[RMDB]
RNA sequence: GGGAACGACUCGAGUAGAGUCGAAAACCUGGGUCAAGCUGAUCUGCCCAGGGUAAGUCGGGACCUAAGGCGAGGCCGACAGGCGUAGUCGAUGGAUAACCGGUUGAUAUUCCGGUACCCGCUGUGACCUACACCCGUCAUUCGUGACGGGUGUAGGAAAAGAAACAACAACAACAAC
Reactivity to 2A3 in 0.01 (KOAc 150mM, MgCl2 10mM, bicine 150mM(pH8.5), 24C), signal-to-noise 2, nucleotides 027 to 126: c000c000u000g000g010g020u230c130a060a040g010c200u170g150a180u120c060u060g000c000c000c000a010g030g010g030u060a020a020g120u090c030g020g010g130a130c010c010u010a050a030g040g030c030g000a050g040g000c050c010g040a110c070a110g000g000c000g040u010a010g000u000c010g000a020u030g000g000a030u070a070a030c010c000g010g000u030u020g070a130u080a130u190u040c000c000g020g050u030a110c000c010c040g000c060u120g010u120g130a090
Reactivity to DMS in 0.01 (KOAc 150mM, MgCl2 10mM, bicine 150mM(pH8.5), 24C), signal-to-noise 4, nucleotides 027 to 126: c000c000u000g000g020g010u020c060a070a080g040c220u020g000a100u010c070u000g000c000c000c000a010g020g000g000u010a020a010g020u010c020g020g000g020a300c000c010u020a150a160g000g000c000g000a200g010g000c000c000g000a140c300a100g010g020c000g010u000a300g010u000c000g000a140u010g010g000a210u020a070a040c010c010g010g000u000u000g010a190u000a300u010u000c010c000g000g000u010a170c000c000c010g040c020u000g000u010g000a230
The data come from the RNA Mapping Database (RMDB), library OK2TRN. An RNA of 177 nucleotides, treated with 2A3 and DMS and read out base by base. The 2A3 profile rests on 1,623 reads. DMS adducts were read by reverse transcription with MarathonRT.